This 207-nucleotide RNA was probed chemically with 2A3 and DMS.
[RMDB]
RNA sequence: GGGAACGACUCGAGUAGAGUCGAAAAUGAGAUAGUUAAAUCACCUCGGUAUGAUUAGGGUGAGACCUAGGAACCGUAGGGGUAUUCUCAAAGGAAGCUUUUGCAGUGACGCCCAUGUAAGUGGGAUAAGAACCAACCCACUUCGGUGGGUUGGUAAACUUAUUACAAAGUUCGCUUUGUAAUAAGUAAAAGAAACAACAACAACAAC
Reactivity to 2A3 in 0.01 (KOAc 150mM, MgCl2 10mM, bicine 150mM(pH8.5), 24C), signal-to-noise 3, nucleotides 027 to 156: u100g000a010g010a020u130a080g090u130u190a090a200a110u140c070a100c010c010u030c040g010g000u270a150u260g040a090u030u060a030g040g000g000u060g130a070g050a040c000c000u000a010g040g030a040a020c010c010g060u100a050g000g000g000g000u020a070u060u040c030u000c000a040a040a000g080g010a080a030g040c050u010u110u210u260g030c110a020g030u040g060a040c070g000c000c000c010a010u020g050u140a100a110g020u040g000g000g010a030u080a080a040g050a010a000c000c000a000a000c010c000c000a000c000u010u020c040g060g000u000g000g000g010u010u010g000g000u000a000a000
Reactivity to DMS in 0.01 (KOAc 150mM, MgCl2 10mM, bicine 150mM(pH8.5), 24C), signal-to-noise 2, nucleotides 027 to 156: u000g000a090g000a030u000a100g000u000u010a050a120a150u010c020a060c000c020u000c010g020g050u000a050u000g010a270u000u000a030g050g000g050u000g020a300g000a150c000c010u000a050g000g010a150a090c020c020g030u000a020g000g000g090g010u000a050u000u000c000u020c020a060a110a170g010g010a110a120g000c050u000u000u000u000g020c010a100g000u000g000a120c080g000c010c000c010a030u000g010u000a070a180g010u000g000g020g020a060u030a020a100g010a140a090c000c010a020a040c000c010c010a010c000u000u010c190g060g020u010g020g020g040u000u000g000g020u000a000a010
The 2A3 profile rests on 1,712 reads. The DMS profile rests on 3,437 reads. For DMS the reverse transcriptase was MarathonRT. It was measured as part of the RMDB library M2RFPK.